Notes
Conditions: 150 mM KOAc, 10 mM MgCl2 and 150 mM bicine (pH 8.5), 24 C. This 177-nucleotide RNA was probed chemically with DMS and 2A3. It was measured as part of the RMDB library OK1LIB. As a SHAPE reagent, 2A3 marks flexible, mostly unpaired nucleotides at the ribose 2'-OH. The 2A3 profile rests on 7,986 reads. Reactivities are rounded to 0.1 and cut off at 0 and 3.
[RMDB]
RNA sequence: GGGAACGACUCGAGUAGAGUCGAAAAGCUCGGUGACACCGCGUCUGCCUGGGUCCGAAAGAUUUCUUGUCGCAAAUCUACAAGACAUUGGUUAACGUGUGGGCCGCUUGAGCGGCCGCUCGGCGGGUCAUCCUAUCCGCUUCGGUGGGUGGGAUGAAAAAGAAACAACAACAACAAC
Reactivity to DMS in 0.01 (KOAc 150mM, MgCl2 10mM, bicine 150mM(pH8.5), 24C), signal-to-noise 4, nucleotides 027 to 126: g010c020u000c040g010g010u000g010a110c130a120c030c020g000c030g010u010c050u000g010c010c010u000g020g010g010u000c010c010g000a120a140a070g000a030u000u010u000c010u010u020g010u010c160g010c190a030a030a040u020c020u000a060c190a130a060g000a030c050a040u010u000g010g010u000u010a090a150c050g000u000g000u010g010g010g020c010c000g040c010u000u030g000a090g010c010g000g000c040c010g010c010u010c020g000g000c020g000g000g010
Reactivity to 2A3 in 0.01 (KOAc 150mM, MgCl2 10mM, bicine 150mM(pH8.5), 24C), signal-to-noise 4, nucleotides 027 to 126: g010c010u010c010g020g030u040g030a020c020a010c040c000g000c000g020u000c030u030g010c000c000u020g030g000g010u000c000c010g040a060a030a000g010a000u010u030u000c020u020u100g080u070c050g010c090a020a020a030u020c010u010a010c030a050a010g010a010c020a030u010u060g030g010u040u080a040a010c010g010u020g010u070g030g040g000c000c000g000c000u120u210g030a020g020c000g010g000c000c000g000c000u010c000g030g000c000g010g000g000